[RMDB]
About this RNA
Conditions: 150 mM KOAc, 10 mM MgCl2 and 150 mM bicine (pH 8.5), 24 C. The record gives the reactivity of an RNA of 177 nucleotides to 2A3 and DMS. Values cover nucleotides 27 to 126. It was measured as part of the RMDB library OK2TRN.
RNA sequence: GGGAACGACUCGAGUAGAGUCGAAAAGGAAAGAUAAAACUGAAGCUCGGUUUCCUUAUCCUGGCUGCAUGGACUUUGUGAUACGCACAAAGGGAGGAGGAGCCACAGAGCUCAUCUAGUUCAGCCACUACUCACUUGAUUUCGAUCAAGUGAGUAGAAAAGAAACAACAACAACAAC
Reactivity to 2A3 in 0.01 (KOAc 150mM, MgCl2 10mM, bicine 150mM(pH8.5), 24C), signal-to-noise 4, nucleotides 027 to 126: g020g030a080a070a030g110a120u170a150a150a030a020c070u070g060a090a010g110c060u040c050g020g000u030u120u000c000c000u000u020a040u040c010c010u020g020g000c030u010g020c010a080u100g080g060a050c020u050u050u040g030u040g050a100u130a210c140g010c100a000c040a040a040a010g010g010g020a040g000g070a000g000g010a000g000c000c030a090c080a100g060a030g000c000u000c000a020u000c010u050a030g060u050u020c010a010g020c020c000a020
Reactivity to DMS in 0.01 (KOAc 150mM, MgCl2 10mM, bicine 150mM(pH8.5), 24C), signal-to-noise 5, nucleotides 027 to 126: g010g000a060a070a070g000a160u010a050a070a110a090c060u000g010a130a120g000c080u000c060g000g010u000u010u000c020c000u000u000a130u000c010c000u000g020g000c070u000g010c120a070u010g010g010a200c030u000u000u010g020u000g000a240u010a110c300g000c010a010c010a020a070a040g000g000g020a120g000g010a040g000g020a030g020c020c000a130c210a150g010a080g010c000u000c030a030u000c030u010a100g000u000u000c040a050g010c020c030a180